[RMDB]
RNA sequence: GGGAACGACUCGAGUAGAGUCGAAAACCUACCCUAUGGUGUCUCCUAUCUGUAGGUCCCAGUGGAGCGAUGAAGCCUGCCCAGCGGGGCUUGGCGGUCAUGGGCUUUCUCUCCGGAGGGAGAGAAAAUCGGGUACAAGAUUCGUCUUGUACCCGAUAAAAGAAACAACAACAACAAC
Reactivity to DMS in 0.01 (KOAc 150mM, MgCl2 10mM, bicine 150mM(pH8.5), 24C), signal-to-noise 5, nucleotides 027 to 126: c010c020u010a100c090c030c030u020a060u010g000g000u010g000u010c050u020c030c030u010a060u020c060u010g010u010a080g010g000u010c020c020c020a090g020u010g010g000a060g020c040g000a080u010g010a080a160g010c010c010u000g000c020c010c010a180g020c160g020g000g000g000c020u020u000g010g020c010g010g000u020c030a040u010g010g010g010c060u010u000u000c000u000c000u000c000c000g030g060a190g000g000g000a000g010a010g000a010a010a060
Reactivity to 2A3 in 0.01 (KOAc 150mM, MgCl2 10mM, bicine 150mM(pH8.5), 24C), signal-to-noise 8, nucleotides 027 to 126: c000c000u040a070c010c000c010u050a060u100g060g010u050g070u040c020u020c030c010u090a160u170c030u050g110u090a050g010g070u030c030c010c000a030g040u070g030g030a060g000c020g020a050u110g100a050a020g010c000c020u030g010c010c030c000a120g150c150g030g040g000g010c030u050u080g010g000c020g000g020u050c020a030u040g030g030g000c000u010u070u000c010u000c000u000c020c020g060g110a160g090g040g000a010g000a000g000a030a010a000

This 177-nucleotide RNA was probed chemically with DMS and 2A3. 2A3 adducts were read by reverse transcription with SuperScript II with manganese. The RNA was probed in 150 mM KOAc, 10 mM MgCl2 and 150 mM bicine (pH 8.5) at 24 C. The data come from the RNA Mapping Database (RMDB), libraries RFM100 and RFMREP.